Description
Chemical mapping of a 177-nucleotide RNA with 2A3 and DMS. The reactions ran in a buffer of 150 mM KOAc, 10 mM MgCl2 and 150 mM bicine (pH 8.5), at 24 C. The 2A3 profile rests on 2,274 reads.

RNA sequence: GGGAACGACUCGAGUAGAGUCGAAAAGCCAGCAGCCCGAGAGCCAGGACCGAACACCCGAGGCGCCGCAAGACGGGCAUGCGACGGUCCUACCGGAAGGCGGCCAAGCCCGUGAAGGCCUGACCGAAUCCCGCAUUGAAUUCGUUCAAUGCGGGAUAAAAGAAACAACAACAACAAC
Reactivity to 2A3 in 0.01 (KOAc 150mM, MgCl2 10mM, bicine 150mM(pH8.5), 24C), signal-to-noise 3, nucleotides 027 to 126: g090c000c000a000g000c030a030g030c010c000c000g110a110g000a000g090c000c070a050g010g000a030c020c030g030a110a040c020a040c040c020c010g020a070g050g050c080g050c050c010g040c040a060a000g090a030c010g000g010g030c010a010u060g010c020g060a030c000g050g000u030c020c000u020a060c010c000g030g040a070a030g050g000c000g010g000c030c000a060a050g020c000c010c000g010u050g020a070a010g010g000c020c040u140g040a080c000c040g000a010
Reactivity to DMS in 0.01 (KOAc 150mM, MgCl2 10mM, bicine 150mM(pH8.5), 24C), signal-to-noise 2, nucleotides 027 to 126: g050c010c030a140g010c040a120g030c030c000c020g040a070g000a130g000c090c060a080g000g000a100c040c010g010a190a090c130a090c020c030c000g010a130g020g040c070g000c030c020g050c060a070a040g020a230c030g000g010g050c040a010u050g030c050g000a060c030g000g010u040c020c030u000a060c070c000g020g030a110a050g010g000c150g000g000c000c020a020a150g000c000c000c000g030u030g000a160a150g000g000c010c040u020g000a130c020c010g000a120